Chemical mapping of a 177-nucleotide RNA with 2A3 and DMS. The RNA was probed in 150 mM KOAc, 10 mM MgCl2 and 150 mM bicine (pH 8.5) at 24 C. For 2A3 the reverse transcriptase was SuperScript II with manganese. For DMS the reverse transcriptase was MarathonRT. For 2A3, 516 sequencing reads were counted.

[RMDB]
RNA sequence: GGGAACGACUCGAGUAGAGUCGAAAAGGCGCGGUCCCUUACUCUCAUCAUUGCGCAGCUGAACGCCGACCGUAAGGCGAUAAAUGCCGGCAUUCAUGCCACGCUGGCUGAGCGGGGAGAACUGGGAUCCGAAUUCCCGUUUCGACGGGAAUUCGGAAAAAGAAACAACAACAACAAC
Reactivity to 2A3 in 0.01 (KOAc 150mM, MgCl2 10mM, bicine 150mM(pH8.5), 24C), signal-to-noise 1, nucleotides 027 to 126: g120g020c090g000c030g010g010u000c000c060c000u000u060a080c000u000c000u040c020a180u000c080a260u140u290g030c040g000c000a000g050c000u030g090a030a000c000g070c000c000g010a130c080c000g150u100a000a220g000g000c000g010a060u110a080a040a010u240g000c040c040g000g000c000a070u180u260c000a040u280g000c000c000a000c010g010c000u000g020g030c000u000g000a000g000c040g040g000g000g000a000g000a040a000c050u090g000g000g000a000
Reactivity to DMS in 0.01 (KOAc 150mM, MgCl2 10mM, bicine 150mM(pH8.5), 24C), signal-to-noise 1, nucleotides 027 to 126: g020g010c110g000c020g000g040u000c060c000c070u000u000a300c010u000c000u000c000a040u000c100a080u050u000g000c000g000c150a050g000c140u000g000a060a150c120g140c000c070g010a110c000c180g050u040a010a270g000g000c000g000a000u000a070a100a110u000g000c010c300g050g000c000a200u000u000c220a010u050g010c000c000a020c300g020c010u000g000g010c000u010g050a110g000c010g000g000g000g000a000g000a180a210c300u050g000g000g110a040